[RMDB]
RNA sequence: GGGAACGACUCGAGUAGAGUCGAAAACGUCGGCGGCGCCGCGGGGGGGCUCGGCGGCGGUGACGGCGCGCAGGUGCUCGGCGAUCUGCCGGCGGUUGAAGCCCUCGAAGUAGGCCAGGUACACGUAUGAUGAGUGGAAGUUCGCUUCCACUCAUCAAAAAGAAACAACAACAACAAC
Reactivity to DMS in 0.01 (KOAc 150mM, MgCl2 10mM, bicine 150mM(pH8.5), 24C), signal-to-noise 2, nucleotides 027 to 126: c040g030u000c030g010g000c010g020g030c070g030c020c000g000c160g000g010g000g010g000g000g010c030u020c030g000g010c020g010g010c020g020g060u010g000a100c070g000g020c040g000c050g020c130a140g010g020u000g030c020u010c020g000g010c000g000a130u020c060u000g000c010c000g000g010c030g000g000u000u000g030a160a140g010c010c030c010u020c030g020a120a160g000u020a080g010g010c020c030a070g010g000u000a050c170a090c140g020u000a150

Structure probing data (DMS) for a 177-nucleotide construct. The data come from the RNA Mapping Database (RMDB), library OK2TST.